[RMDB]
RNA sequence: GGGAACGACUCGAGUAGAGUCGAAAAAUGAUUCGUAGUGUAAGACGAUCGACAGUCAUCGCUUGCCAGCAGGACCACCAAAGGAAUACGCUUCGGUAACUACUCGAGUUCCCAAGCGAUAAAACAAGCUUGGACUACUGUUCGCAGUAGUCCAAGCAAAAGAAACAACAACAACAAC
Reactivity to 2A3 in 0.01 (KOAc 150mM, MgCl2 10mM, bicine 150mM(pH8.5), 24C), signal-to-noise 1, nucleotides 027 to 126: a000u130g020a050u110u020c030g010u060a100g030u050g090u250a070a070g060a180c040g010a050u020c010g100a040c040a040g060u180c040a050u040c010g020c020u010u030g000c000c010a020g020c020a040g100g020a040c020c010a030c070c040a150a030a020g130g000a000a050u010a040c030g010c040u040u010c000g000g000u020a080a140c010u000a000c010u000c040g010a000g020u000u010c010c000c040a010a000g050c040g040a040u080a130a120a010a040c050a110a000

Structure probing data (2A3) for a 177-nucleotide construct. The 2A3 profile rests on 938 reads. Conditions: 150 mM KOAc, 10 mM MgCl2 and 150 mM bicine (pH 8.5), 24 C.